[RMDB]
RNA sequence: GGGAACGACUCGAGUAGAGUCGAAAAUUACAUAAGUCUAACACCUUGUUUCGGACUAACAAGGCCGCAUGGAGGAUGGCCGCACCUCCAUAGUUAGACGUCCGAGAACCAGCCGAAAUGAAAAAGACGAUACCAGUGAUUUCGAUCACUGGUAUCGAAAAGAAACAACAACAACAAC
Reactivity to DMS in 0.01 (KOAc 150mM, MgCl2 10mM, bicine 150mM(pH8.5), 24C), signal-to-noise 2, nucleotides 027 to 126: u030u050a220c100a080u000a140a120g020u000c000u000a000a050c000a300c070c040u010u000g000u000u000u040c150g000g000a120c110u090a070a100c010a010a020g000g000c300c070g050c200a040u020g010g020a010g020g010a070u040g000g050c070c010g000c030a230c020c000u000c010c010a020u030a000g030u020u000a000g000a020c000g020u040c060c100g020a080g050a140a090c040c100a030g000c070c000g000a030a030a070u000g000a100a080a040a010a100g020a260
Reactivity to 2A3 in 0.01 (KOAc 150mM, MgCl2 10mM, bicine 150mM(pH8.5), 24C), signal-to-noise 3, nucleotides 027 to 126: u180u090a100c080a010u140a170a040g000u000c000u000a000a000c020a030c030c000u010u000g050u000u100u120c160g110g070a100c060u020a000a000c020a020a000g010g000c050c030g120c070a010u000g010g000a010g000g000a060u100g050g000c020c000g010c010a000c000c000u000c000c000a010u010a020g010u020u000a030g000a000c010g000u000c010c000g060a060g010a070a020c010c020a000g060c000c070g010a040a080a110u150g050a010a050a060a040a030g070a000
About this RNA
This 177-nucleotide RNA was probed chemically with DMS and 2A3. 2A3 adducts were read by reverse transcription with SuperScript II with manganese.